[RMDB]
An RNA of 177 nucleotides, treated with DMS and 2A3 and read out base by base. For 2A3, 1,377 sequencing reads were counted. For DMS, 2,383 sequencing reads were counted. For DMS the reverse transcriptase was MarathonRT. The reactions ran in a buffer of 150 mM KOAc, 10 mM MgCl2 and 150 mM bicine (pH 8.5), at 24 C. Source: RMDB library OK2TST, as collected in RNAgym. Reactivities are given for positions 27 through 126.
RNA sequence: GGGAACGACUCGAGUAGAGUCGAAAACGAUGCCCCGACAUCAGAGAAUUGGAAUGCCCCACCGGGCUGUCCGCUUGCUGCUCCGCUAUCGGUGGCCCAUUGCAGUUUGACUUCGUGGUGAUCGAAACGAUUAUCGAUGGUUCGCCAUCGAUAAUCGAAAAGAAACAACAACAACAAC
Reactivity to DMS in 0.01 (KOAc 150mM, MgCl2 10mM, bicine 150mM(pH8.5), 24C), signal-to-noise 3, nucleotides 027 to 126: c100g020a050u000g000c040c000c020c010g010a130c080a050u010c030a060g000a300g010a110a070u000u000g000g010a070a090u000g010c040c130c000c080a090c150c100g020g000g040c010u000g010u020c060c040g010c080u000u000g030c030u000g020c050u000c000c090g000c080u000a050u010c070g020g010u000g000g010c020c140c020a060u000u000g020c030a030g000u000u010u000g010a090c120u000u000c050g000u010g010g010u010g000a060u000c040g010a070a060a170
Reactivity to 2A3 in 0.01 (KOAc 150mM, MgCl2 10mM, bicine 150mM(pH8.5), 24C), signal-to-noise 1, nucleotides 027 to 126: c040g020a020u080g020c000c000c000c000g040a020c000a070u070c020a010g080a000g040a150a060u140u130g010g130a080a040u050g060c000c000c020c020a030c000c040g010g030g000c000u050g020u060c030c050g010c060u030u070g020c020u020g010c020u000c010c020g000c060u070a050u180c010g010g030u000g000g000c000c000c010a050u060u080g030c010a000g000u060u090u080g050a080c020u040u040c030g140u060g030g010u040g070a170u060c030g000a030a070a040